[RMDB]
RNA sequence: GGGAACGACUCGAGUAGAGUCGAAAAGAGUGAGAUCAUUAAAGCACCUUUCCGAGCUGUGACGGACAUUGAUCCUCAAAGAAUGGUGCAAGAGAGUACAGUAACAAAGGGAGACUAUGAUCACAGAUCUCUGCACGAUAUUCGUAUCGUGCAGAGAAAAAGAAACAACAACAACAAC
Reactivity to 2A3 in 0.01 (KOAc 150mM, MgCl2 10mM, bicine 150mM(pH8.5), 24C), signal-to-noise 1, nucleotides 027 to 126: g090a000g040u070g050a060g000a030u000c020a080u110u160a050a080a000g010c010a030c000c000u000u000u050c020c030g000a030g010c020u020g020u020g080a010c020g070g020a010c010a060u010u070g080a110u050c030c030u120c100a090a040a000g020a020a030u080g000g040u040g000c020a010a000g070a010g000a010g080u110a050c050a050g080u130a090a060c010a090a080a100g030g060g010a120g020a020c010u070a030u150g020a020u000c020a020c010a050g090a060
Reactivity to DMS in 0.01 (KOAc 150mM, MgCl2 10mM, bicine 150mM(pH8.5), 24C), signal-to-noise 2, nucleotides 027 to 126: g000a070g020u010g010a090g000a040u000c020a070u000u010a070a140a210g000c040a080c040c010u000u000u000c070c060g000a230g010c040u000g020u000g020a050c050g000g000a060c170a080u010u000g020a060u000c040c040u010c070a040a020a060g000a100a030u010g020g020u000g030c040a050a070g000a070g000a080g000u010a040c080a030g010u000a020a100c190a050a060a020g000g010g000a080g000a100c130u000a080u010g010a110u030c050a070c060a060g020a060
The data come from the RNA Mapping Database (RMDB), library OK2TST. This 177-nucleotide RNA was probed chemically with 2A3 and DMS. For 2A3 the reverse transcriptase was SuperScript II with manganese. Conditions: 150 mM KOAc, 10 mM MgCl2 and 150 mM bicine (pH 8.5), 24 C. For DMS, 1,353 sequencing reads were counted. DMS adducts were read by reverse transcription with MarathonRT.